An RNA of 177 nucleotides, treated with DMS and 2A3 and read out base by base.
Values cover nucleotides 27 to 126.
The reactions ran in a buffer of 150 mM KOAc, 10 mM MgCl2 and 150 mM bicine (pH 8.5), at 24 C.
For 2A3 the reverse transcriptase was SuperScript II with manganese.

RNA sequence: GGGAACGACUCGAGUAGAGUCGAAAACGUGCUCACAUCACAGUCGCGGAAGGCCGACGUCUCUAGCAGCUCCAUGGCGUACGACGUCGACGUGCGGAUUUCGCCGCGGACGACAAGUUUGCGGAGCGAUUACUAAUGCGUUCGCGCAUUAGUAAUCAAAAGAAACAACAACAACAAC
Reactivity to DMS in 0.01 (KOAc 150mM, MgCl2 10mM, bicine 150mM(pH8.5), 24C), signal-to-noise 8, nucleotides 027 to 126: c100g020u010g010c020u010c040a090c100a060u010c060a070c090a130g020u010c030g000c050g000g000a090a040g020g010c060c000g000a030c050g000u010c010u000c110u020a140g000c060a090g000c050u020c110c160a120u040g010g000c020g000u010a090c170g000a060c060g000u000c020g000a060c060g020u030g020c020g000g000a160u010u020u020c050g000c000c010g010c010g010g010a050c010g000a120c130a080a130g000u000u000u000g010c000g000g000a050g010c100
Reactivity to 2A3 in 0.01 (KOAc 150mM, MgCl2 10mM, bicine 150mM(pH8.5), 24C), signal-to-noise 9, nucleotides 027 to 126: c040g060u080g010c010u020c020a060c010a090u090c020a050c030a090g050u040c030g010c030g060g060a070a040g130g000c040c010g010a020c010g030u010c010u000c020u060a090g020c060a030g020c020u070c090c060a130u230g080g000c020g020u060a040c060g060a020c040g030u020c020g030a040c020g030u090g020c020g030g050a100u070u150u160c070g000c020c000g030c010g020g020a040c010g050a040c040a100a090g010u020u030u060g030c040g020g010a030g030c060